[RMDB]
RNA sequence: GGGAACGACUCGAGUAGAGUCGAAAAAUGUCGUCAUCACGUGUAAGAUUCGUCGUUAGGACGGGGAUAUCUGCACGCGCAACAAUUGACUGUGAAACGCUGCCGACUAGAUUCUCGGUAUAAUCAGCUCGGCGUGUCCCCAUUGUGAUGAGAUCGAGAUGUACCUAAUGUUCGCAUUAGGUACAUCAAAAGAAACAACAACAACAAC
Reactivity to DMS in 0.01 (KOAc 150mM, MgCl2 10mM, bicine 150mM(pH8.5), 24C), signal-to-noise 2, nucleotides 027 to 156: a070u010g020u000c050g040u000c030a070u000c020a020c030g010u000g030u000a070a100g000a080u000u010c020g000u000c020g000u010u000a180g070g010a060c000g010g000g010g040a080u010a040u010c010u010g040c020a020c000g020c020g040c090a230a170c040a050a160u010u000g010a080c030u000g020u000g010a100a090a050c020g010c030u010g020c180c010g030a070c030u010a160g010a080u000u010c040u020c040g050g000u010a070u000a020a060u010c020a010g010c050u000c040g000g010c010g010u010g010u000c000c010c000c040a300u000u000g000u000g010a120u000g020a120g000a210u000c030g030a300
Reactivity to 2A3 in 0.01 (KOAc 150mM, MgCl2 10mM, bicine 150mM(pH8.5), 24C), signal-to-noise 6, nucleotides 027 to 156: a010u150g040u070c030g050u030c020a040u020c000a010c020g020u020g040u050a190a050g010a030u060u060c040g080u010c020g080u290u270a200g070g170a020c000g000g010g000g010a030u030a050u100c020u040g010c030a020c020g010c030g000c030a020a170c030a110a180u140u160g030a080c050u050g040u070g080a100a040a030c050g000c090u120g020c000c000g010a010c010u040a140g030a110u080u010c100u050c100g070g010u180a140u100a130a030u040c010a010g030c100u010c020g010g000c010g000u010g010u010c000c000c010c010a090u100u150g010u010g030a050u050g040a060g020a070u110c060g020a020
Chemical mapping of a 207-nucleotide RNA with DMS and 2A3. The RNA was probed in 150 mM KOAc, 10 mM MgCl2 and 150 mM bicine (pH 8.5) at 24 C. As a SHAPE reagent, 2A3 marks flexible, mostly unpaired nucleotides at the ribose 2'-OH. Values are in units of 0.01, from 0 to 300, in steps of 10. For DMS, 5,683 sequencing reads were counted.